[RMDB]
RNA sequence: GGGAACGACUCGAGUAGAGUCGAAAAGAUAUGGAGUCAGCUCGCGAUAAGAUAGUGUCGGAAACGACAUUUAUCUUUUGACGCGAGUUUCCUAAGUCAAAGGCAGCGUUCUUCGGAACGCUGCCAACUAUCACGUUAAGUUCGCUUAACGUGAUAGAAAAGAAACAACAACAACAAC
Reactivity to DMS in 0.01 (KOAc 150mM, MgCl2 10mM, bicine 150mM(pH8.5), 24C), signal-to-noise 6, nucleotides 027 to 126: g010a060u000a210u010g000g000a100g010u010c150a140g010c000u000c000g020c000g010a120u010a020a010g010a010u000a000g000u000g000u010c000g000g000a090a060a210c000g000a010c000a000u000u010u000a000u000c000u000u000u000u000g010a200c070g010c000g000a020g010u000u010u000c010c000u000a090a140g010u000c110a070a110a120g000g010c000a000g000c000g020u000u000c000u000u010c190g020g000a010a000c000g010c000u000g000c000c010a010a020
Reactivity to 2A3 in 0.01 (KOAc 150mM, MgCl2 10mM, bicine 150mM(pH8.5), 24C), signal-to-noise 3, nucleotides 027 to 126: g040a000u140a080u280g050g000a030g080u160c090a020g030c010u000c000g020c030g030a050u030a090a000g000a010u010a000g010u000g000u010c020g010g030a080a030a060c030g000a000c010a010u100u200u020a000u000c000u000u040u020u090g090a040c020g000c000g000a000g000u000u000u000c000c000u010a070a030g070u040c070a080a120a110g050g000c000a010g020c000g020u030u000c030u070u140c290g040g000a000a000c000g000c010u020g030c010c000a000a000
Chemical mapping of a 177-nucleotide RNA with DMS and 2A3. DMS adducts were read by reverse transcription with MarathonRT. The data come from the RNA Mapping Database (RMDB), library TTRDEL. The DMS profile rests on 9,950 reads.